About this RNA:
The record gives the reactivity of an RNA of 207 nucleotides to 2A3. It was measured as part of the RMDB library VIROID.
[RMDB]
RNA sequence: GGGAACGACUCGAGUAGAGUCGAAAACGCCUCCGGGCGCUCCCCUCGAUCCACCUUCGAGGGGGUUCACACCUCCAGUCGACGGGCCGGCUACUCUUCUUUCCCUUCUCUCGUCUUCCUCGGUCAACCUCUUAAGUUCCUCUUCUUCCUCCUUGCUACUACGUAAAAUGUUCGCAUUUUACGUAGUAAAAGAAACAACAACAACAAC
Reactivity to 2A3 in 0.01 (KOAc 150mM, MgCl2 10mM, bicine 150mM(pH8.5), 24C), signal-to-noise 3, nucleotides 027 to 156: c020g030c000c010u020c100c150g110g010g000c000g020c020u070c010c010c000c010u020c010g040a050u080c060c080a070c030c090u010u020c030g020a020g030g000g000g010g020u140u110c100a090c030a050c060c010u010c030c050a050g060u050c010g040a040c030g020g030g060c050c020g010g030c020u050a070c020u040c020u100u030c020u030u090u100c000c010c000u080u030c040u020c030u020c020g060u020c010u060u020c020c010u020c020g020g010u030c030a060a050c020c020u030c030u120u070a100a060g050u060u040c010c000u020c010u080u010c000u050u040c030c020u010c020c010u020u030g020c000u000
The RNA was probed in 150 mM KOAc, 10 mM MgCl2 and 150 mM bicine (pH 8.5) at 24 C.